The data come from the RNA Mapping Database (RMDB), library OK3TST. This 207-nucleotide RNA was probed chemically with DMS and 2A3. High 2A3 reactivity points to a flexible backbone, as in loops and unpaired stretches. For 2A3, 1,165 sequencing reads were counted. DMS adducts were read by reverse transcription with MarathonRT. Reactivities are given for positions 27 through 156. The RNA was probed in 150 mM KOAc, 10 mM MgCl2 and 150 mM bicine (pH 8.5) at 24 C.
[RMDB]
RNA sequence: GGGAACGACUCGAGUAGAGUCGAAAAGGACCAAACUACAAAGAGUGGUACAGAUGUUAAUUACAAUGAUUUUUCCUAUGCCACCCAUGGAAACAAAAAUAGCAAGAUAGAGAAGGCUAAAUCCCAGUUUUUUUUGACUGCUAUUCAGCAAAGCCUAGUAUUAUAUACUCUUCGGAGUAUAUAAUACAAAAGAAACAACAACAACAAC
Reactivity to DMS in 0.01 (KOAc 150mM, MgCl2 10mM, bicine 150mM(pH8.5), 24C), signal-to-noise 1, nucleotides 027 to 156: g000g010a130c010c060a120a070a130c030u000a160c060a110a060a170g000a060g030u000g010g050u000a090c030a040g030a160u000g010u010u000a020a070u000u010a140c010a160a090u000g010a080u010u000u010u000u010c010c010u010a050u010g020c020c010a040c030c020c010a130u000g030g010a100a120a170c020a020a090a050a100a080u000a080g040c060a090a040g010a230u010a090g000a140g000a090a000g010g000c040u000a020a050a100u030c030c020c040a120g010u000u000u000u000u000u000u000u000g040a160c050u010g000c020u010a090u010u000c060a090g000c040a070a040a050g010c010c020u010a090
Reactivity to 2A3 in 0.01 (KOAc 150mM, MgCl2 10mM, bicine 150mM(pH8.5), 24C), signal-to-noise 2, nucleotides 027 to 156: g030g010a020c060c050a060a060a030c060u130a020c060a040a120a010g040a070g020u020g020g000u060a040c030a020g050a060u030g020u100u110a060a080u150u100a110c070a080a090u190g050a110u080u040u080u070u030c000c010u050a040u120g020c000c030a040c010c040c000a090u090g010g030a080a030a000c040a030a090a020a000a000u030a020g040c030a070a010g080a060u060a060g070a030g020a060a000g030g010c000u000a050a050a050u070c050c020c010a000g010u010u000u000u000u010u010u050u090g050a050c000u000g030c010u040a040u090u090c040a000g030c030a070a050a060g090c090c010u160a010